[RMDB]
RNA sequence: GGGAACGACUCGAGUAGAGUCGAAAAUUCUGUUGUUAAUGACCGCGAGGCGCUUAACAGAAAAACUCCAAUGGAGCUUGAAAAUCUUCUUGAUGAAGCAUCAAAGGUUAUGAUGGAAGAGUCUCAGCUUCACAAGAGAAAAGAGAUUUCCAUUAGGUGGUUCUAUACUAUUCGUAGUAUAGAACCAAAAAGAAACAACAACAACAAC
Reactivity to DMS in 0.01 (KOAc 150mM, MgCl2 10mM, bicine 150mM(pH8.5), 24C), signal-to-noise 2, nucleotides 027 to 156: u000u000c060u010g010u000u020g010u020u000a140a150u010g010a070c000c000g030c210g030a290g110g050c010g020c050u000u010a060a090c010a060g000a020a090a070a120a080c000u010c000c020a090a080u010g000g020a030g020c010u000u010g010a080a080a140a170u000c020u000u020c020u000u000g000a130u000g010a100a030g020c020a150u000c110a120a100a120g010g010u000u000a070u000g010a140u000g010g010a070a040g020a100g000u010c020u000c030a070g000c010u000u000c040a030c030a010a050g010a100g020a030a080a130a300g010a100g000a140u000u000u000c010c010a070u010u000a070g030g040
Reactivity to 2A3 in 0.01 (KOAc 150mM, MgCl2 10mM, bicine 150mM(pH8.5), 24C), signal-to-noise 2, nucleotides 027 to 156: u020u000c000u030g030u040u020g040u020u080a180a060u170g050a110c020c000g030c060g060a080g020g040c050g000c110u130u100a020a010c020a020g020a030a060a010a030a020c030u040c010c000a010a010u020g020g010a020g020c010u010u030g020a080a100a070a080u050c040u300u100c000u000u140g020a110u010g000a210a010g000c010a030u120c120a150a150a040g060g000u120u140a050u270g060a040u080g060g070a070a080g030a090g080u000c010u010c070a050g010c000u000u000c000a010c000a020a010g000a000g020a000a070a040a010g030a000g000a030u160u150u030c000c000a000u000u020a070g040g040
An RNA of 207 nucleotides, treated with DMS and 2A3 and read out base by base. The reactions ran in a buffer of 150 mM KOAc, 10 mM MgCl2 and 150 mM bicine (pH 8.5), at 24 C. 2A3 is a SHAPE reagent: it acylates the 2'-hydroxyl of flexible nucleotides of all four kinds.